[RMDB]
RNA sequence: GGGAACGACUCGAGUAGAGUCGAAAAUCACUAUUCGUAGUGAAAUAUCGCGUACUACCUUCGAGCUGCCCACCAGAGUAUUCUCCCAAAUAGGAGAAUACGACGAAGGUGGGUCAGCACAGACAAAGGUAUCGCACAACGACAGCUUCGGCUGUAAAGCUGUGUCAAAAUUCGUUUUGACACAGCUAAAAGAAACAACAACAACAAC
Reactivity to 2A3 in 0.01 (KOAc 150mM, MgCl2 10mM, bicine 150mM(pH8.5), 24C), signal-to-noise 4, nucleotides 027 to 156: u030c020a000c010u020a020u110u100c200g120u070a010g010u030g080a040a120a050u230a090u120c140g010c020g020u080a080c020u010a000c020c010u010u040c030g040a030g000c000u000g000c040c000c000a000c000c000a010g010a000g070u010a000u000u000c010u060c000c050c050a200a250a170u290a160g000g000a000g000a000a000u000a010c000g020a020c020g060a070a020g000g010u000g020g000g030u060c030a000g020c000a000c030a010g110a020c120a040a070a010g010g000u030a020u300c000g070c020a030c010a110a060c040g100a010c010a000g020c000u080u100c180g210g000c010u020g020u090a150a050
Reactivity to DMS in 0.01 (KOAc 150mM, MgCl2 10mM, bicine 150mM(pH8.5), 24C), signal-to-noise 1, nucleotides 027 to 156: u000c000a040c000u000a060u000u000c270g030u020a000g000u010g020a060a170a060u000a070u000c110g030c020g010u020a130c080u000a010c020c000u000u000c060g000a090g000c060u010g000c040c000c020a030c000c000a140g000a300g010u000a010u000u000c000u010c000c000c030a000a190a250u010a070g030g000a030g030a010a000u020a000c040g030a160c130g030a060a090g010g020u000g020g000g020u010c000a000g000c000a030c090a070g000a210c180a040a050a030g000g010u030a070u000c010g030c050a170c090a130a110c000g020a030c000a030g020c030u000u050c280g010g000c000u020g030u000a040a190